Overview:
Chemical mapping of a 177-nucleotide RNA with DMS.

[RMDB]
RNA sequence: GGGAACGACUCGAGUAGAGUCGAAAAGAUAUGGACCUGAUGCUCGAUAAGCCUAUGGUCGGAAACGACCAUCAGGCUUUUGACGAGCUGCCAGGUCCUAAGUCAAACACAAGCUUCGGCUUGUGAACCCUAGCCAGUACUUCGGUACUGGCUAGGGAAAAGAAACAACAACAACAAC
Reactivity to DMS in 0.01 (KOAc 150mM, MgCl2 10mM, bicine 150mM(pH8.5), 24C), signal-to-noise 1, nucleotides 027 to 126: g020a000u000a300u020g000g010a000c000c010u000g010a210u000g010c000u000c010g050a200u010a040a010g010c000c010u000a010u000g000g000u010c000g000g000a080a130a220c000g010a010c000c000a010u010c170a000g040g010c000u010u000u010u000g030a270c060g010a030g030c010u000g020c210c010a010g010g000u000c000c010u000a010a040g000u000c030a190a240a230c000a030c030a000a000g020c010u000u000c190g060g000c000u000u010g020u000g010a050a200

The RNA was probed in 150 mM KOAc, 10 mM MgCl2 and 150 mM bicine (pH 8.5) at 24 C. It was measured as part of the RMDB library TTRDES.